[RMDB]
RNA sequence: GGGAACGACUCGAGUAGAGUCGAAAACUGAGAAUGAUGGUUUCCAGUUUCAUCUAUGUCCCUGCAAAGGACAUGAACUCAUUCUCUUUUAUGGCUGCAUAGUAUUCCAUGGUGUAUAUGUACCACACCAUUGCGUGGGGUUCGCCCCACGCAAUGGAAAAGAAACAACAACAACAAC
Reactivity to 2A3 in 0.01 (KOAc 150mM, MgCl2 10mM, bicine 150mM(pH8.5), 24C), signal-to-noise 1, nucleotides 027 to 126: c040u010g020a000g030a080a020u020g010a040u060g160g000u010u020u050c050c050a040g040u050u090u210c080a060u020c080u170a050u050g000u000c030c000c010u000g060c180a040a030a020g000g020a010c010a000u030g000a050a010c010u010c010a020u040u040c020u050c000u030u040u030u070a070u020g050g000c050u020g040c110a010u010a050g070u090a120u110u060c020c070a110u220g120g000u040g100u030a000u000a000u150g030u040a030c020c020a030c020a000
Reactivity to DMS in 0.01 (KOAc 150mM, MgCl2 10mM, bicine 150mM(pH8.5), 24C), signal-to-noise 2, nucleotides 027 to 126: c120u000g000a020g000a000a000u010g010a070u010g000g000u000u000u000c050c090a140g020u000u020u010c100a080u030c130u000a000u000g000u000c000c000c020u010g030c300a110a190a070g010g000a010c010a000u000g000a120a090c050u000c010a000u000u000c020u000c020u020u000u030u000a090u010g020g010c140u000g010c070a040u000a100g020u000a070u000u000c020c030a080u010g030g010u000g000u000a120u000a050u020g020u000a060c090c100a090c160a080
The record gives the reactivity of an RNA of 177 nucleotides to 2A3 and DMS. Source: RMDB library OK2TST, as collected in RNAgym. DMS adducts were read by reverse transcription with MarathonRT. High DMS reactivity at an A or C suggests that its Watson-Crick edge is free. Conditions: 150 mM KOAc, 10 mM MgCl2 and 150 mM bicine (pH 8.5), 24 C.